[RMDB]
RNA sequence: GGGAACGACUCGAGUAGAGUCGAAAAUACAAGUACGAAAGUACAAGCCUUAUCAGUUGGGCCUUCUGGUCAAAUUAGCGCUCUCCCAGGAGGUCCUUCGCAUGAGGUCGACAAGCGCUAAAAGAAAUGAUCAUUUAGGAUUCGUCCUAAAUGAUCAAAAAGAAACAACAACAACAAC
Reactivity to 2A3 in 0.01 (KOAc 150mM, MgCl2 10mM, bicine 150mM(pH8.5), 24C), signal-to-noise 3, nucleotides 027 to 126: u180a010c030a080a100g020u000a010c000g040a150a010a010g000u010a010c030a040a000g000c000c000u040u030a050u090c080a120g070u180u100g020g020g000c000c000u010u000c000u000g020g020u080c060a020a040a280u120u080a080g020c000g020c030u010c020u040c020c000c000a000g000g000a000g000g000u000c000c000u000u010c000g000c000a010u040g010a000g030g020u070c040g040a040c040a110a050g040c030g020c090u100a040a080a030a030g130a020a140a070
Reactivity to DMS in 0.01 (KOAc 150mM, MgCl2 10mM, bicine 150mM(pH8.5), 24C), signal-to-noise 7, nucleotides 027 to 126: u010a100c150a110a150g010u000a010c000g010a150a080a180g020u000a010c010a150a200g000c010c010u000u000a050u000c150a140g010u000u010g010g010g010c000c000u000u000c010u010g010g000u010c080a050a050a110u000u000a030g010c020g020c010u000c100u000c180c010c000a010g000g000a010g000g010u000c000c000u000u000c080g010c180a050u000g000a020g000g020u000c110g000a070c190a050a040g010c040g010c030u000a020a030a110a130g010a070a080a100

About this RNA: The record gives the reactivity of an RNA of 177 nucleotides to 2A3 and DMS. For DMS, 8,362 sequencing reads were counted. The RNA was probed in 150 mM KOAc, 10 mM MgCl2 and 150 mM bicine (pH 8.5) at 24 C. The data come from the RNA Mapping Database (RMDB), library M2PK90. The 2A3 profile rests on 4,226 reads.